[RMDB]
Structure probing data (2A3 and DMS) for a 170-nucleotide construct. For 2A3, 13,551 sequencing reads were counted. 2A3 is a SHAPE reagent: it acylates the 2'-hydroxyl of flexible nucleotides of all four kinds. Values cover nucleotides 27 to 129. For DMS, 14,851 sequencing reads were counted.
RNA sequence: GGGAACGACUCGAGUAGAGUCGAAAAACCGCAAGUGGUGAAACUUCCGUCUGCACCUCAGACUAUCCAGCCCGAGGUAAAAGAAGUUGCACCUGUCUAUGAGGCUGAUACCGAACAGACACAGAAUGGACAGAGGUCUUCGGACCUCUGAAAAGAAACAACAACAACAAC
Reactivity to 2A3 in 0.01 (KOAc 150mM, MgCl2 10mM, bicine 150mM(pH8.5), 24C), signal-to-noise 6, nucleotides 027 to 129: a010c030c020g010c070a070a040g100u050g100g000u010g010a010a000a000c000u010u000c020c030g060u010c050u090g080c140a040c010c020u050c010a010g000a070c020u070a090u160c070c080a010g050c000c000c060g010a000g000g000u020a050a040a030a000g020a010a010g010u050u010g020c010a000c000c020u040g020u000c010u000a080u090g030a030g060g000c040u100g050a070u130a150c000c010g000a030a040c020a000g030a000c010a000c000a140g130a080a080u090g020g010a020
Reactivity to DMS in 0.01 (KOAc 150mM, MgCl2 10mM, bicine 150mM(pH8.5), 24C), signal-to-noise 2, nucleotides 027 to 129: a210c020c030g040c200a140a110g040u000g050g000u020g040a000a000a000c000u000u040c050c050g020u050c150u040g010c270a100c090c020u030c050a060g030a050c000u040a100u050c200c070a030g040c020c020c050g040a050g030g020u000a050a040a090a060g030a000a020g040u000u000g000c030a000c010c040u030g030u030c040u050a090u010g040a300g050g020c000u040g000a110u070a180c050c040g030a180a030c120a030g020a010c050a120c020a100g030a080a120u120g000g030a230